This 177-nucleotide RNA was probed chemically with 2A3 and DMS. Values cover nucleotides 27 to 126. For DMS, 2,336 sequencing reads were counted. Conditions: 150 mM KOAc, 10 mM MgCl2 and 150 mM bicine (pH 8.5), 24 C. The data come from the RNA Mapping Database (RMDB), library OK1LIB.
RNA sequence: GGGAACGACUCGAGUAGAGUCGAAAAUGGUGUUAAGUGGAAUAAGUGGAAAAAUAUACAUAUAUGUACAGGGGGCUACAUAUAUGUAUAUGCCCCCUACCGUCAGUAUAAGUAGGUAUAAGGUGGAGAUUUUACUGCGAUUCGUCGCAGUAAAAUCAAAAGAAACAACAACAACAAC
Reactivity to 2A3 in 0.01 (KOAc 150mM, MgCl2 10mM, bicine 150mM(pH8.5), 24C), signal-to-noise 1, nucleotides 027 to 126: u090g000g040u090g060u030u080a130a080g030u080g090g100a090a150u210a230a000g020u170g020g020a010a000a000a150a000u020a000u000a000c000a010u040a000u000a000u000g000u000a030c080a090g000g000g030g060g000c010u000a000c000a000u040a000u000a000u010g020u020a000u000a000u000g000c000c010c030c060c000u000a000c000c000g070u030c000a030g080u070a060u010a210a020g080u120a040g010g060u090a150u030a090a000g010g050u090g010g050a140
Reactivity to DMS in 0.01 (KOAc 150mM, MgCl2 10mM, bicine 150mM(pH8.5), 24C), signal-to-noise 1, nucleotides 027 to 126: u050g010g000u000g000u000u010a030a150g040u010g000g000a050a070u040a080a120g010u020g020g040a030a090a040a080a030u000a030u000a020c000a040u000a020u000a020u000g000u000a000c040a140g010g000g000g010g000c240u000a040c040a020u000a020u010a010u010g020u000a010u000a000u000g000c040c010c010c050c010u000a040c000c070g010u000c060a060g000u040a050u070a080a070g000u000a020g010g000u030a060u020a040a120g000g000u000g000g000a240